[RMDB]
RNA sequence: GGGAACGACUCGAGUAGAGUCGAAAAACAGUGGCGUCGGCACCUAAGCGGACGAGUUCGUCGACGAAGCGGAAGCGUGCCUCGAAGAUGUUUUCCGUGAUAACUGAAACGCCAUCUGCAACCGUCGUGGCGAUACGAAAUUCGUUUCGUAUCGCCAAAAAGAAACAACAACAACAAC
Reactivity to 2A3 in 0.01 (KOAc 150mM, MgCl2 10mM, bicine 150mM(pH8.5), 24C), signal-to-noise 1, nucleotides 027 to 126: a000c030a010g010u020g010g000c020g000u020c030g060g010c020a030c020c020u070a080a010g070c000g000g020a030c010g040a020g070u150u160c020g030u020c010g000a100c040g020a070a010g000c020g040g060a040a020g090c060g080u090g020c020c010u000c000g020a030a020g030a020u000g060u040u060u030u050c060c030g000u070g040a070u050a200a010c000u050g000a120a030a000c000g000c000c000a080u070c040u000g050c010a050a060c030c000g100u140c070g060
Reactivity to DMS in 0.01 (KOAc 150mM, MgCl2 10mM, bicine 150mM(pH8.5), 24C), signal-to-noise 2, nucleotides 027 to 126: a040c050a030g010u000g010g000c020g020u000c080g020g010c060a050c040c070u010a130a300g000c020g020g010a040c220g030a120g010u000u000c050g040u000c000g010a220c040g030a140a180g000c010g000g010a110a050g010c150g010u000g010c060c060u000c000g000a050a130g010a070u000g020u000u000u000u000c010c060g000u010g000a080u010a020a010c070u000g000a100a100a000c030g000c040c010a000u010c010u000g000c030a110a240c020c010g010u000c230g020